This 207-nucleotide RNA was probed chemically with 2A3. Reactivities are rounded to 0.1 and cut off at 0 and 3. Reactivities are given for positions 27 through 156. Conditions: 150 mM KOAc, 10 mM MgCl2 and 150 mM bicine (pH 8.5), 24 C.
RNA sequence: GGGAACGACUCGAGUAGAGUCGAAAAUAUUGGAGAUUAUGGAGCUGUGCGACAAGUGCUUUCCCAUCGCAACCUCGGUUCGGUGUGUGGCGCCUUUGAGGGGUUUAGUGCGUCCGGUACGAGCUCCGGUUCGUCCGGCCGUAACGCCUUUUCAACUGACACACGUAAUGUUCGCAUUACGUGUGUCAAAAGAAACAACAACAACAAC
Reactivity to 2A3 in 0.01 (KOAc 150mM, MgCl2 10mM, bicine 150mM(pH8.5), 24C), signal-to-noise 1, nucleotides 027 to 156: u220a030u050u070g040g000a020g030a050u080u040a130u220g060g010a030g050c010u010g020u030g040c000g000a030c030a010a110g030u050g050c090u140u140u090c040c010c000a020u070c010g000c060a020a040c000c020u050c120g030g000u080u020c000g000g050u010g000u000g020u050g010g000c030g020c040c030u040u080u000g040a030g040g040g000g020u010u050u050a000g000u000g000c000g000u000c000c030g000g010u120a000c030g000a000g000c000u000c020c150g010g000u000u000c010g030u000c000c030g000g020c000c000g000u000a050a040c020g000c000c000u020u000u000u010c020a070a020c040u020